Record summary: This 177-nucleotide RNA was probed chemically with DMS and 2A3. The reactions ran in a buffer of 150 mM KOAc, 10 mM MgCl2 and 150 mM bicine (pH 8.5), at 24 C.
[RMDB]
RNA sequence: GGGAACGACUCGAGUAGAGUCGAAAAGGAAGUGCUGUUGCUGUCGGACCUGUUGACUGAGGCACUACAUCACAGCGGGGCCGCCCGCAUGCAGGGGAUCGCCGCUGCCGUCGACGCACCGCGGCUGUGGCGACCAAGGAUUCGUCCUUGGUCGCCAAAAAGAAACAACAACAACAAC
Reactivity to DMS in 0.01 (KOAc 150mM, MgCl2 10mM, bicine 150mM(pH8.5), 24C), signal-to-noise 2, nucleotides 027 to 126: g010g020a090a090g020u000g030c020u010g000u010u000g030c030u010g020u000c050g000g000a100c030c040u000g040u010u000g010a120c160u020g010a110g020g010c100a050c140u000a040c120a030u000c050a110c020a050g010c040g050g010g000g000c060c090g000c050c000c120g000c130a040u020g020c050a050g050g000g000g010a070u000c100g000c010c010g010c020u010g010c020c020g000u010c060g020a090c110g000c100a110c110c080g020c010g010g020c020u010g010
Reactivity to 2A3 in 0.01 (KOAc 150mM, MgCl2 10mM, bicine 150mM(pH8.5), 24C), signal-to-noise 1, nucleotides 027 to 126: g060g030a100a090g030u010g050c020u020g030u140u100g020c040u030g070u000c020g080g090a060c020c010u050g020u080u080g050a150c120u060g010a030g060g160c090a040c130u100a020c040a050u100c040a010c030a040g000c000g000g020g010g000c000c010g100c030c010c000g060c010a030u130g060c040a000g080g020g060g020a070u080c010g040c120c000g000c060u020g000c020c010g080u190c040g020a060c060g000c090a030c000c040g030c000g030g000c040u000g060
Reactivities are given for positions 27 through 126. The DMS profile rests on 1,647 reads. Source: RMDB library OK2TRN, as collected in RNAgym.